Structure probing data (2A3) for a 207-nucleotide construct.
Source: RMDB library M2RFPK, as collected in RNAgym.
The 2A3 profile rests on 889 reads.
The RNA was probed in 150 mM KOAc, 10 mM MgCl2 and 150 mM bicine (pH 8.5) at 24 C.

RNA sequence: GGGAACGACUCGAGUAGAGUCGAAAAUGGGCGAUCGCUCGCUGUUUUUGUGGCUGGCUUUCAGCCGGCUGGAGGAGCCGGGAGCGGAGGCGGAGGACCGAGCCAAAAACGUCAGCCGAGGCCGGGCAAUAUCGUGGACUGUUCGCAGUCCACGAAACCACUAUAAGUGGUUCGCCACUUAUAGUGGAAAAGAAACAACAACAACAAC
Reactivity to 2A3 in 0.01 (KOAc 150mM, MgCl2 10mM, bicine 150mM(pH8.5), 24C), signal-to-noise 1, nucleotides 027 to 156: u070g000g000g010c050g020a140u060c060g040c030u010c020g150c040u040g060u010u050u010u040u070g270u070g080g010c010u000g000g000c000u040u300u210c040a010g000c000c010g010g010c020u020g020g050a050g030g010a010g020c050c080g000g000g020a020g000c000g000g020a000g020g030c030g030g040a060g050g010a000c000c060g000a040g110c010c000a010a000a040a030a040c040g050u050c020a010g000c030c010g030a040g060g010c010c000g000g010g040c030a020a130u090a030u170c000g000u000g010g000a000c000u000g050u100u090c230g010c140a000g000u000c000c000a000c000g000a000a000a000